This 177-nucleotide RNA was probed chemically with DMS and 2A3. The reactions ran in a buffer of 150 mM KOAc, 10 mM MgCl2 and 150 mM bicine (pH 8.5), at 24 C. For DMS the reverse transcriptase was MarathonRT.

[RMDB]
RNA sequence: GGGAACGACUCGAGUAGAGUCGAAAACAUCGCGACUUCGGUCGCGAUGAAAGUUGUGCUCCCUCUCGCAUAACAAAUCCCAAUGAGGGUAGGUGACUGCAAAACGACACGCCUUCGGGCGUGUCAACUGAAUUAUCAGAUUCGUCUGAUAAUUCAGAAAAGAAACAACAACAACAAC
Reactivity to DMS in 0.01 (KOAc 150mM, MgCl2 10mM, bicine 150mM(pH8.5), 24C), signal-to-noise 7, nucleotides 027 to 126: c010a000u000c010g010c010g010a020c000u000u010c190g030g010u000c000g010c010g010a000u000g000a020a060a060g000u000u000g020u000g000c010u000c040c020c000u000c010u000c130g000c010a010u000a010a020c030a040a120a140u000c000c000c000a110a070u010g010a030g010g000g010u010a050g010g010u010g010a120c090u000g000c130a050a050a090a120c180g010a010c000a010c000g000c000c000u000u010c200g030g010g000c000g010u000g000u000c000a020a070
Reactivity to 2A3 in 0.01 (KOAc 150mM, MgCl2 10mM, bicine 150mM(pH8.5), 24C), signal-to-noise 2, nucleotides 027 to 126: c000a000u010c000g000c000g000a000c010u060u050c250g120g000u000c010g010c000g000a000u000g000a010a000a000g000u020u020g010u010g010c010u090c020c030c000u010c010u030c040g010c000a010u010a040a000c010a020a130a080u020c000c000c000a000a060u140g020a030g010g020g040u050a080g010g110u080g050a100c110u130g000c060a000a050a060a120c100g010a000c000a000c000g000c000c010u050u110c240g040g000g000c020g010u010g000u000c000a010a000